The record gives the reactivity of an RNA of 207 nucleotides to 2A3 and DMS. Source: RMDB library OK3TST, as collected in RNAgym. Reactivities are given for positions 27 through 156. High DMS reactivity at an A or C suggests that its Watson-Crick edge is free. For 2A3 the reverse transcriptase was SuperScript II with manganese. The reactions ran in a buffer of 150 mM KOAc, 10 mM MgCl2 and 150 mM bicine (pH 8.5), at 24 C. The 2A3 profile rests on 1,270 reads. DMS adducts were read by reverse transcription with MarathonRT.

RNA sequence: GGGAACGACUCGAGUAGAGUCGAAAAAACUCCAAAAAUACGUUCAGAAACGACGUCCGGAUCUAGGAGAGCGGCAGCAUGAAGCCGAGCAUCGUCUUCGACGUCGAUGCGCCAUUCUAGCAGCGGCAUAUUAGCAUGGAGUUCAGAGAAAACGACAUAUUUUAAAUCACUUCGGUGAUUUAAAAUAAAAAGAAACAACAACAACAAC
Reactivity to 2A3 in 0.01 (KOAc 150mM, MgCl2 10mM, bicine 150mM(pH8.5), 24C), signal-to-noise 3, nucleotides 027 to 156: a000a000c030u030c030c000a130a030a000a030a000u110a030c020g010u080u130c070a090g140a140a170a030c060g030a040c020g050u040c010c010g070g040a150u060c030u080a030g020g030a040g010a020g050c030g030g000c000a030g040c040a110u130g110a150a000g000c030c010g000a000g010c000a020u010c000g070u000c040u140u180c140g120a080c150g010u020c010g000a000u000g000c010g000c010c020a080u030u030c010u030a020g010c070a020g080c060g030g000c000a040u110a050u140u120a040g050c060a040u050g010g000a000g000u090u030c040a010g070a010g020a040a140a030a040c090g170a040c040a040
Reactivity to DMS in 0.01 (KOAc 150mM, MgCl2 10mM, bicine 150mM(pH8.5), 24C), signal-to-noise 2, nucleotides 027 to 156: a010a020c030u020c000c010a000a110a170a090a110u010a030c020g000u000u000c060a260g000a140a110a120c020g010a080c020g000u000c040c030g030g000a140u000c020u000a120g020g000a110g010a090g050c090g000g020c030a140g000c080a110u000g020a070a080g000c110c020g030a100g020c030a050u000c070g000u000c030u000u000c090g010a070c050g000u000c000g020a020u010g000c000g000c030c020a090u000u000c030u000a160g010c080a130g010c020g000g000c040a080u010a070u010u000a100g020c080a180u000g020g010a060g000u000u000c060a130g000a230g020a120a020a060a080c070g000a090c050a190